Annotation
Chemical mapping of a 207-nucleotide RNA with 2A3 and DMS. DMS adducts were read by reverse transcription with MarathonRT. Conditions: 150 mM KOAc, 10 mM MgCl2 and 150 mM bicine (pH 8.5), 24 C. It was measured as part of the RMDB library ARCHII.
[RMDB]
RNA sequence: GGGAACGACUCGAGUAGAGUCGAAAAUUAUAUUGCUAGUCUAUCGUAACUGAUGGGCAACAUCCUCAAGGUGCUGGAAGUUACCUGCAAAGGUAAUAUCAGCAGCCACAUCUCCAUGUGGUUCACAGACUAAAUGAGGGUGGACCAAAUCCGCCAGGUAAUAAGGUUAGUUCGCUAACCUUAUUACAAAAGAAACAACAACAACAAC
Reactivity to 2A3 in 0.01 (KOAc 150mM, MgCl2 10mM, bicine 150mM(pH8.5), 24C), signal-to-noise 7, nucleotides 027 to 156: u110u040a070u040a060u130u170g050c070u060a040g010u000c010u010a020u020c010g060u050a030a100c070u110g020a010u010g010g010g010c000a010a010c000a000u000c010c000u010c010a030a040g060g000u040g010c000u000g010g050a130a140g040u000u000a000c000c000u030g020c070a110a050a020g000g000u000a010a000u020a040u080c010a000g010c000a010g010c000c000a000c000a010u110c110u030c210c060a030u020g000u010g000g000u020u030c060a080c030a120g100a050c030u090a090a070a090u080g000a010g000g000g000u000g000g020a000c030c030a070a050a070u070c050c050g040c070c040a050g010
Reactivity to DMS in 0.01 (KOAc 150mM, MgCl2 10mM, bicine 150mM(pH8.5), 24C), signal-to-noise 4, nucleotides 027 to 156: u000u000a060u010a090u010u000g010c030u010a100g000u000c010u000a160u000c000g000u010a130a240c110u000g020a070u000g010g030g010c010a070a040c010a030u000c000c000u000c030a070a230g000g010u010g010c000u000g020g000a100a280g030u000u000a010c000c000u000g030c300a090a190a040g000g020u000a010a010u000a140u010c020a050g010c040a110g010c000c010a010c000a020u000c110u000c210c110a070u000g040u000g010g000u000u000c040a280c130a120g020a170c070u000a060a120a180u010g000a030g000g010g020u000g000g010a070c070c050a040a090a300u010c020c020g010c060c040a100g000